[RMDB]
Description: This 177-nucleotide RNA was probed chemically with 2A3 and DMS.
RNA sequence: GGGAACGACUCGAGUAGAGUCGAAAAGCUGUGUGUCGUGCACAAUCCGCGACGACCUGCUGGUGCUGUUACGCAGACUGCACCGCCGAGACAAUGUCGGCCGGAUCGUCGUGCACCUGGCGCCGUGGUAAAAUAUCGACUUCGGUCGAUAUUUUACAAAAGAAACAACAACAACAAC
Reactivity to 2A3 in 0.01 (KOAc 150mM, MgCl2 10mM, bicine 150mM(pH8.5), 24C), signal-to-noise 4, nucleotides 027 to 126: g050c070u050g050u030g000u010g030u200c020g040u020g020c030a000c000a040a030u030c020c010g000c050g010a020c010g020a010c000c020u030g020c090u140g020g000u000g010c010u030g020u060u040a150c190g010c060a030g010a040c000u020g000c010a010c000c000g010c020c020g100a070g010a050c150a160a120u190g000u020c000g040g000c030c000g000g020a030u040c060g160u030c030g000u060g000c000a010c000c040u030g000g000c010g000c000c020g070u110g040
Reactivity to DMS in 0.01 (KOAc 150mM, MgCl2 10mM, bicine 150mM(pH8.5), 24C), signal-to-noise 4, nucleotides 027 to 126: g010c050u010g020u010g020u010g010u000c040g040u000g020c050a040c050a150a090u010c030c010g030c180g000a020c000g000a020c010c090u000g020c050u020g040g000u000g000c000u000g000u000u000a070c300g000c250a230g010a050c000u000g000c010a020c000c010g010c020c100g010a180g000a140c300a090a100u010g010u000c000g000g000c040c030g000g010a030u000c210g000u000c140g000u010g010c020a010c050c050u000g010g010c020g030c020c030g000u020g010
The reactions ran in a buffer of 150 mM KOAc, 10 mM MgCl2 and 150 mM bicine (pH 8.5), at 24 C. For DMS, 4,366 sequencing reads were counted. For 2A3 the reverse transcriptase was SuperScript II with manganese.